[RMDB]
RNA sequence: GGGAACGACUCGAGUAGAGUCGAAAACAUUUUAACGGGUGUGCACUCUCUAACACGAAUUACCCAGUUAUUUUCGACUUUACUCGAGUCGUUAUAGCGUGCGUUGAGAGAGUUGGCCGCGAUUGAAUUAUAAUCCAACUUUCGAGUUGGAUUAUAAAAAAGAAACAACAACAACAAC
Reactivity to DMS in 0.01 (KOAc 150mM, MgCl2 10mM, bicine 150mM(pH8.5), 24C), signal-to-noise 3, nucleotides 027 to 126: c170a060u000u000u010u000a050a060c060g000g000g020u000g000u000g030c060a080c050u010c040u000c060u000a110a150c070a030c070g000a100a100u020u000a050c020c010c000a100g030u000u000a050u000u000u000u000c010g000a010c000u000u000u000a010c010u000c020g010a000g020u000c000g000u000u000a010u000a080g000c020g010u010g010c040g000u010u000g000a060g000a070g010a070g010u010u010g010g000c010c020g000c030g000a120u000u020g000a100a130